[RMDB]
RNA sequence: GGGAACGACUCGAGUAGAGUCGAAAAGGCUAGCAAAAUCUCCAACGUGCAGCUGACAAACAUUGUCUCCUACAUGGGCAUGUUGCAUGAAAACCGCCUGGGUCAGAAUGUUCUUCACAACACCAUGCAAGGGGAGUCCAAAAGAGAUUACAUGCGCAACGUGUGUAACGUUCGCGUUACACACGUUAAAAGAAACAACAACAACAAC
Reactivity to DMS in 0.01 (KOAc 150mM, MgCl2 10mM, bicine 150mM(pH8.5), 24C), signal-to-noise 2, nucleotides 027 to 156: g010g060c000u000a090g000c050a070a110a080a200u000c010u010c020c000a070a070c060g000u000g030c020a040g030c020u000g020a100c030a130a160a130c130a150u010u000g000u000c000u000c000c000u000a030c030a040u000g000g020g030c060a120u000g010u020u000g010c010a120u000g010a130a060a080a080c030c040g050c050c020u000g000g030g080u000c020a070g000a140a100u000g000u010u000c090u010u000c070a050c010a040a060c010a090c040c000a070u000g020c010a120a080g050g010g020g010a050g000u010c050c040a020a030a100a090g010a060g010a110u000u000a050c030a060u000g000c000g060c070
Reactivity to 2A3 in 0.01 (KOAc 150mM, MgCl2 10mM, bicine 150mM(pH8.5), 24C), signal-to-noise 4, nucleotides 027 to 156: g040g000c030u030a030g000c050a020a060a040a140u020c040u010c030c030a100a070c060g040u060g020c020a030g030c040u090g030a040c050a050a160a000c040a090u050u180g040u040c020u000c010c020u070a080c010a090u100g010g010g010c100a060u120g020u010u010g000c070a070u060g030a030a020a020a030c050c040g070c070c080u100g080g030g050u130c030a050g090a150a070u080g030u050u030c050u080u070c030a030c030a030a070c020a020c020c010a010u030g020c080a090a040g010g000g000g000a000g000u010c020c020a010a150a030a000g050a000g000a010u050u090a040c050a060u140g030c040g030c070